[RMDB]
RNA sequence: GGGAACGACUCGAGUAGAGUCGAAAACAGAACGCACUCUGCAGGCACUCGGCAACGUGAAGUGUUCACGUCCUGUGAUGCAGCCUCUGCUCCAGGCCACUUCCGGAACUGCGAGGGAACAGCUGUGCUUCAUAGUCAUGUUCGCAUGACUAUGAAGAAAAGAAACAACAACAACAAC
Reactivity to 2A3 in 0.01 (KOAc 150mM, MgCl2 10mM, bicine 150mM(pH8.5), 24C), signal-to-noise 9, nucleotides 027 to 126: c020a010g080a110a010c060g010c040a030c020u050c030u110g000c040a030g110g000c070a030c080u090c070g120g010c040a060a050c030g130u180g090a020a020g060u060g070u250u140c090a040c130g100u160c010c000u080g080u230g040a050u240g000c000a020g040c030c050u220c030u040g010c000u010c010c000a010g000g000c000c010a020c010u040u010c000c000g030g040a090a050c050u080g010c020g020a020g020g010g010a060a020c010a030g020c050u040g000u030g050
Reactivity to DMS in 0.01 (KOAc 150mM, MgCl2 10mM, bicine 150mM(pH8.5), 24C), signal-to-noise 8, nucleotides 027 to 126: c050a080g020a100a120c160g010c070a050c030u010c020u000g030c050a050g010g020c130a110c070u010c060g010g010c120a090a080c010g010u000g010a020a070g010u010g010u010u010c110a300c160g000u010c010c010u000g000u020g010a030u020g020c020a030g000c220c100u020c040u000g010c010u000c010c010a010g020g000c060c030a040c040u000u000c010c010g000g000a090a120c080u000g000c040g010a040g000g000g000a160a120c070a060g000c080u000g010u000g020